[RMDB]
RNA sequence: GGGAACGACUCGAGUAGAGUCGAAAAGGAAAGAUGGAAACAUCAAAGACACAACAGCAAAGUGUCAAGCUGAAUGACGUGGAACUGGCUAAUAAAAUUGGCCGGAUCAUACCACGAUGAAAAAAAACUAAGGAAAGAGGUUCGCCUCUUUCCUUAGAAAAGAAACAACAACAACAAC
Reactivity to DMS in 0.01 (KOAc 150mM, MgCl2 10mM, bicine 150mM(pH8.5), 24C), signal-to-noise 2, nucleotides 027 to 126: g010g020a140a100a120g010a030u010g010g010a180a070a180c020a010u010c030a070a150a160g000a040c040a010c080a090a070c170a100g010c170a110a130a090g000u000g010u010c040a120a120g010c090u010g000a100a080u010g000a100c000g060u000g000g020a090a190c000u000g000g010c030u010a000a010u000a060a030a010a300u000u000g000g000c010c000g000g020a040u000c100a120u040a170c000c000a000c010g000a100u010g010a010a000a000a010a050a030a030a150
Reactivity to 2A3 in 0.01 (KOAc 150mM, MgCl2 10mM, bicine 150mM(pH8.5), 24C), signal-to-noise 1, nucleotides 027 to 126: g050g040a120a040a060g020a000u030g000g020a050a020a000c000a000u010c020a120a000a000g010a000c010a000c020a090a210c040a050g180c100a130a120a000g010u000g030u000c020a050a000g050c060u090g090a160a070u150g070a090c000g000u000g010g040a020a010c000u030g000g010c020u020a030a020u090a090a210a050a120u080u030g000g000c000c020g000g000a040u040c050a010u050a140c000c020a000c030g040a050u100g060a100a090a020a020a000a000a000a000

Structure probing data (DMS and 2A3) for a 177-nucleotide construct.
Reactivities are given for positions 27 through 126.
For 2A3 the reverse transcriptase was SuperScript II with manganese.
The RNA was probed in 150 mM KOAc, 10 mM MgCl2 and 150 mM bicine (pH 8.5) at 24 C.